This 170-nucleotide RNA was probed chemically with DMS and 2A3.
For DMS, 11,224 sequencing reads were counted.
2A3 adducts were read by reverse transcription with SuperScript II with manganese.
The reactions ran in a buffer of 150 mM KOAc, 10 mM MgCl2 and 150 mM bicine (pH 8.5), at 24 C.
Reactivities are given for positions 27 through 129.
DMS adducts were read by reverse transcription with MarathonRT.
For 2A3, 4,128 sequencing reads were counted.
Source: RMDB library 15KLIB, as collected in RNAgym.
[RMDB]
RNA sequence: GGGAACGACUCGAGUAGAGUCGAAAAGAAGCGAGGAGGAAAGCAAAGAAAGCAACGGGGCUAGCCGUCAGGUGUUCCACCCCCCGAGAGGGUACGAGUGAGGCUUAUCCCGGGGAACUCGGCGAAUGUACAGCGACGUUCGCGUCGCUGAAAAGAAACAACAACAACAAC
Reactivity to DMS in 0.01 (KOAc 150mM, MgCl2 10mM, bicine 150mM(pH8.5), 24C), signal-to-noise 5, nucleotides 027 to 129: g030a090a040g020c060g030a050g000g000a040g000g000a040a050a060g020c220a060a110a090g030a040a040a020g030c110a130a110c130g000g000g000g000c090u020a090g050c010c000g030u050c120a040g000g030u050g080u020u050c100c030a140c090c040c020c020c010c050g020a050g040a050g000g000g000u070a060c050g020a090g020u060g010a050g010g010c060u050u030a110u010c060c010c020g010g000g020g020a100a110c000u030c060g000g000c000g020a030a050u040g030u120a060
Reactivity to 2A3 in 0.01 (KOAc 150mM, MgCl2 10mM, bicine 150mM(pH8.5), 24C), signal-to-noise 3, nucleotides 027 to 129: g080a020a000g010c050g020a050g000g000a030g000g020a040a000a000g050c080a000a060a090g040a060a120a010g010c000a020a030c060g010g000g000g000c020u010a010g000c000c000g030u030c040a000g070g010u090g050u130u040c060c030a020c010c000c030c000c000c000g020a020g050a030g060g060g010u080a060c050g030a020g040u090g030a000g020g010c000u040u090a110u040c000c000c000g000g050g000g000a010a010c050u020c020g050g000c060g050a040a020u080g010u100a020